[RMDB]
RNA sequence: GGGAACGACUCGAGUAGAGUCGAAAACAGCCCGGAACCCUACUUGGCGAUGAUCAAAUCUAUAAUGUAAUUGUUACAGCUCAUGCCUUUGUAAUAAUCUUCUUUAUAGUAAUACCCAUUAUGAUUGGGGGUUUUGGUAACUGACUCGUACCGCUAACUGUUCAACGUACUUCGGUACGUUGAACAGAAAAGAAACAACAACAACAAC
Reactivity to 2A3 in 0.01 (KOAc 150mM, MgCl2 10mM, bicine 150mM(pH8.5), 24C), signal-to-noise 1, nucleotides 027 to 156: c000a000g030c010c000c000g000g010a020a020c000c020c020u150a300c020u170u020g000g000c020g040a020u050g010a040u100c120a040a100a000u040c000u040a000u020a090a030u040g110u070a000a040u010u010g020u040u010a000c020a000g000c090u160c260a120u250g040c070c000u100u150u140g000u010a010a010u000a000a020u000c040u170u000c000u040u120u010a000u020a030g020u020a070a050u030a100c000c000c060a010u120u040a050u300g050a080u050u090g020g000g010g020g000u010u000u010u030g000g000u010a120a040c010u030g060a070c010u020c160g020u050a040c000c020g000c070u030a060a090
Chemical mapping of a 207-nucleotide RNA with 2A3. The 2A3 profile rests on 471 reads. Values cover nucleotides 27 to 156. For 2A3 the reverse transcriptase was SuperScript II with manganese.